[RMDB]
This 177-nucleotide RNA was probed chemically with DMS. The RNA was probed in 150 mM KOAc, 10 mM MgCl2 and 150 mM bicine (pH 8.5) at 24 C. For DMS, 520 sequencing reads were counted.
RNA sequence: GGGAACGACUCGAGUAGAGUCGAAAAGUCUCCCCCAAAUUUGGGCAUUGUCCCCGGGUCUUCCAACGGACUGGGCGUUGCUCCCGGACACUGAGGACUGGCCCCGGGGUCUCGCUCACCUUCAGCAACCCAUAAAACAGUUCGCUGUUUUAUGGGUAAAAGAAACAACAACAACAAC
Reactivity to DMS in 0.01 (KOAc 150mM, MgCl2 10mM, bicine 150mM(pH8.5), 24C), signal-to-noise 1, nucleotides 027 to 126: g010u000c000u010c000c000c010c020c050a130a160a150u020u000u030g000g000g040c010a160u000u000g000u000c000c030c020c040g000g010g010u000c000u000u020c000c000a060a300c250g010g000a150c000u000g000g000g020c090g040u000u020g020c160u010c010c000c000g070g010a020c090a180c000u010g000a300g010g000a040c300u020g040g020c040c050c020c000g030g010g010g060u050c050u000c070g020c000u000c010a050c170c090u030u000c090a040g010c240a210
It was measured as part of the RMDB library RFMREP.